[RMDB]
RNA sequence: GGGAACGACUCGAGUAGAGUCGAAAAGGUGCCUGCAAUCCCCACGGGCACCUGUGACUAUGAUUGGGAACAGCAAAGCUGCUGAUGUGUGUAUGUUGGGCAGCGCUCUUAUCCUGCGCGCUCGACAGUCAAGCGGUUUUUUCGAAAACCGCUUGACAAAAGAAACAACAACAACAAC
Reactivity to DMS in 0.01 (KOAc 150mM, MgCl2 10mM, bicine 150mM(pH8.5), 24C), signal-to-noise 1, nucleotides 027 to 126: g000g000u000g000c000c000u000g000c030a010a080u000c000c000c000c030a280c000g030g000g000c010a050c000c000u000g000u030g040a220c020u000a090u000g000a180u010u000g000g000g000a100a080c060a050g000c010a020a090a080g020c200u000g000c000u000g040a110u030g040u000g010u000g060u050a060u010g000u020u010g000g000g000c030a180g030c040g020c020u010c020u000u080a060u000c290c150u030g010c010g020c000g000c000u010c000g000a000c000a040